[RMDB]
RNA sequence: GGGAACGACUCGAGUAGAGUCGAAAAUGAAAUACCACUACCUUUAUCGUCUUUUUACUUAUUCAAUGAAGCGAAGCUGGGAUUAAUGUCUCACUUUUUAGUAUUAAAGUCUUAUUCAGGCUCAUUCCAGGCUAAUAGACUUCGGUCUAUUAGCCUGAAAAGAAACAACAACAACAAC
Reactivity to DMS in 0.01 (KOAc 150mM, MgCl2 10mM, bicine 150mM(pH8.5), 24C), signal-to-noise 1, nucleotides 027 to 126: u010g000a130a060a130u000a240c100c040a140c020u040a110c040c030u070u040u000a000u000c140g030u000c000u030u000u000u000u010a140c100u000u030a020u030u020c100a030a060u000g000a030a040g020c170g000a030a040g000c200u000g000g010g000a020u000u020a020a030u000g030u000c000u000c000a030c000u030u000u000u000u010a080g000u000a010u040u000a130a050a050g000u000c030u000u040a130u040u000c060a050g050g000c030u000c090a050u000u000c100
Reactivity to 2A3 in 0.01 (KOAc 150mM, MgCl2 10mM, bicine 150mM(pH8.5), 24C), signal-to-noise 4, nucleotides 027 to 126: u200g010a010a020a000u110a050c000c020a000c050u060a040c020c010u040u110u080a140u110c020g070u040c080u030u160u060u040u020a040c010u060u120a070u240u070c140a260a230u190g130a110a020g060c040g040a030a010g000c070u100g000g000g040a020u060u230a140a120u300g080u050c000u020c010a000c000u050u090u010u010u070a060g040u040a010u160u130a120a050a010g000u010c050u070u110a070u140u130c100a010g000g020c030u020c160a020u020u080c030